Source: RMDB library RSTRND, as collected in RNAgym. Structure probing data (2A3) for a 207-nucleotide construct. 2A3 adducts were read by reverse transcription with SuperScript II with manganese. Reactivities are rounded to 0.1 and cut off at 0 and 3. The RNA was probed in 150 mM KOAc, 10 mM MgCl2 and 150 mM bicine (pH 8.5) at 24 C.
[RMDB]
RNA sequence: GGGAACGACUCGAGUAGAGUCGAAAAUGGAUCAUCGGUUCACAGACUAGAUGUCGGUGGGUCAUUAUCGAAAAUGGCUUAAGGUAUAGUCGGACCACAUGGGAGACCAUGAUGUGGUGAAUAAGGAGAUACCAUCUCCCCGAGCGCCACGGUGCGCGUCAGCACAGGGGUUCGCCCCUGUGCUGACAAAAGAAACAACAACAACAAC
Reactivity to 2A3 in 0.01 (KOAc 150mM, MgCl2 10mM, bicine 150mM(pH8.5), 24C), signal-to-noise 2, nucleotides 027 to 156: u040g040g000a010u000c020a030u050c060g070g020u020u020c020a000c030a040g020a000c040u050a080g070a260u130g070u070c040g120g070u140g120g010g000u030c010a010u010u110a100u170c190g030a220a270a000a000u010g000g000c000u160u130a170a030g000g020u040a050u020a080g030u000c040g020g110a070c030c000a000c000a010u000g000g000g000a110g100a020c020c000a010u060g020a120u040g060u080g060g050u030g020a030a000u080a120a040g120g000a020g000a020u100a300c000c000a020u000c040u000c030c000c000c000g110a060g080c000g010c020c000a230c190g040g000u200g020c010g000c000